[RMDB]
Source: RMDB library M2PK50, as collected in RNAgym.
An RNA of 177 nucleotides, treated with DMS and read out base by base.
The DMS profile rests on 843 reads.
The reactions ran in a buffer of 150 mM KOAc, 10 mM MgCl2 and 150 mM bicine (pH 8.5), at 24 C.
RNA sequence: GGGAACGACUCGAGUAGAGUCGAAAAGUUGCGACCUUCGGGUCGCAACAAAUACCGAGGUACAUGCUCGGUAGAAUGUAGAAACCCUUGGAAACAAGGGAAAAAGCUUAACCUUCGGGUUAAGCAACUAAUCUGGUGACUUCGGUCACCAGAUUAGAAAAGAAACAACAACAACAAC
Reactivity to DMS in 0.01 (KOAc 150mM, MgCl2 10mM, bicine 150mM(pH8.5), 24C), signal-to-noise 1, nucleotides 027 to 126: g000u010u000g020c000g000a010c010c000u000u030c240g020g000g030u000c010g020c000a000a000c000a040a060a140u000a000c000c000g000a000g020g050u000a040c250a090u010g000c000u000c000g020g000u000a040g000a100a030u010g000u000a120g000a150a120a060c000c000c000u020u000g000g000a210a050a250c000a010a020g000g000g010a000a020a100a080a110g000c020u020u000a010a000c000c000u000u010c280g070g000g000u000u000a000a000g010c000a020a050